[RMDB]
RNA sequence: GGGAACGACUCGAGUAGAGUCGAAAAUAAGGAGGGGUGAACCGGCCCAGGUCGGAAACGGAGCAGGUCAAAACUCCCGUGCUGAUCAGUAGUGGGAUCGCGCCUGUGAAUAGCCACUGCACUCCAGCCUGUGCAACAUAGCGAGACCCCGUCUCUUACUGAACGUAAAGUUCGCUUUACGUUCAGUAAAAGAAACAACAACAACAAC
Reactivity to 2A3 in 0.01 (KOAc 150mM, MgCl2 10mM, bicine 150mM(pH8.5), 24C), signal-to-noise 2, nucleotides 027 to 156: u210a020a040g060g020a010g000g040g040g000u020g050a060a050c000c020g030g000c000c060c020a010g030g040u030c020g040g100a060a040a100c040g030g070a060g020c010a000g000g010u060c000a010a010a090a140c090u060c010c020c010g020u050g010c070u040g020a190u190c070a060g040u090a060g080u060g060g000g010a010u030c060g000c020g010c080c030u030g020u000g030a110a110u100a100g030c020c040a080c130u110g000c030a050c040u000c010c000a000g000c010c000u000g010u010g010c010a100a080c020a210u210a070g080c040g000a060g080a110c010c000c000c010g040u000c000u000c000u010u010